[RMDB]
RNA sequence: GGGAACGACUCGAGUAGAGUCGAAAAGCUGAUUUUGAGAUUUAGUAAUGUAAUUUCCAAAUCACAUACAGCAGCUGAUUUGGGAUGCUGUGUACUACAUGUGGUCCUUGUGGAGGAUUCUGCGCAAAAUAUGAUGCGAUUUCGAUCGCAUCAUAUUAAAAGAAACAACAACAACAAC
Reactivity to 2A3 in 0.01 (KOAc 150mM, MgCl2 10mM, bicine 150mM(pH8.5), 24C), signal-to-noise 3, nucleotides 027 to 126: g020c060u010g020a040u000u010u060u090g020a030g000a030u040u020u140a110g030u130a120a160u160g020u130a020a080u020u000u020c020c000a010a000a020u010c010a010c010a020u140a030c050a040g070c020a010g000c040u040g050a300u130u100u210g130g040g000a030u010g000c020u020g000u010g050u100a060c040u040a040c030a100u170g070u090g040g000u000c020c000u060u090g120u110g100g080a040g030g000a020u170u050c030u110g020c070g000c070a110a090
Reactivity to DMS in 0.01 (KOAc 150mM, MgCl2 10mM, bicine 150mM(pH8.5), 24C), signal-to-noise 5, nucleotides 027 to 126: g020c100u000g000a030u000u010u000u000g000a070g000a030u000u000u000a090g010u010a110a080u010g000u000a220a040u000u000u010c010c060a020a020a010u000c000a030c060a090u000a060c080a040g010c040a030g000c070u010g010a180u000u010u010g020g000g000a030u000g010c010u000g000u000g010u010a060c120u000a070c120a070u010g010u000g000g010u000c020c040u000u000g040u000g000g020a080g010g000a090u000u010c040u000g000c090g000c200a080a090
Background
Chemical mapping of a 177-nucleotide RNA with 2A3 and DMS. Reactivities are rounded to 0.1 and cut off at 0 and 3. The DMS profile rests on 6,507 reads. Values cover nucleotides 27 to 126. The RNA was probed in 150 mM KOAc, 10 mM MgCl2 and 150 mM bicine (pH 8.5) at 24 C. It was measured as part of the RMDB library OK2TST.